Structure probing data (DMS) for a 177-nucleotide construct. For DMS, 2,533 sequencing reads were counted.

RNA sequence: GGGAACGACUCGAGUAGAGUCGAAAAAAAAAAGAUAUGGAGCGACAUGGAGCGAGGAUCAACUCGUAACAUCUGUCGGAAACGACAGUGGAGUUGGGAGCUCCUUGUCGCUCCUAAGUCAAAAAAAGCCAUAUACAAUGUUCGCAUUGUAUAUGGCAAAAGAAACAACAACAACAAC
Reactivity to DMS in 0.01 (KOAc 150mM, MgCl2 10mM, bicine 150mM(pH8.5), 24C), signal-to-noise 2, nucleotides 027 to 126: a000a030a120a120a080a080g000a020u010a300u000g000g000a020g030c000g000a010c010a010u000g010g020a020g010c000g010a030g000g010a040u010c010a010a000c010u000c010g030u000a030a060c220a040u010c000u000g000u000c000g000g000a060a030a090c010g020a010c010a000g000u000g020g010a030g000u000u000g010g000g000a060g010c020u000c010c000u010u000g000u000c000g020c000u000c000c000u000a000a050g000u010c000a000a000a050a050a120a130a180